[RMDB]
RNA sequence: GGGAACGACUCGAGUAGAGUCGAAAAUAUUCAGCAUUAUCCUCGAAUAAAGAGUUUGCCCAAGAUGGACCUUUACCUUCAUGGUUACAAGUAUAAGGAAUUGAUGGUGCAGAAGCUCCCCAUAUAGCGCGAUAAUGGCUUUCGAGCCAUUAUCGCGAAAAGAAACAACAACAACAAC
Reactivity to 2A3 in 0.01 (KOAc 150mM, MgCl2 10mM, bicine 150mM(pH8.5), 24C), signal-to-noise 1, nucleotides 027 to 126: u200a000u010u060c000a110g020c150a140u260u000a250u300c000c000u030c000g000a040a060u060a210a060a000g150a000g030u000u000u180g070c000c000c000a020a000g040a000u160g010g130a010c000c000u000u010u020a000c070c000u090u220c030a080u130g050g000u110u170a110c080a200a000g000u000a050u000a300a000g150g000a070a000u090u000g080a020u150g000g000u020g000c000a010g000a080a000g000c000u000c000c000c010c000a060u040a070u090a180g080

Chemical mapping of a 177-nucleotide RNA with 2A3. For 2A3, 410 sequencing reads were counted.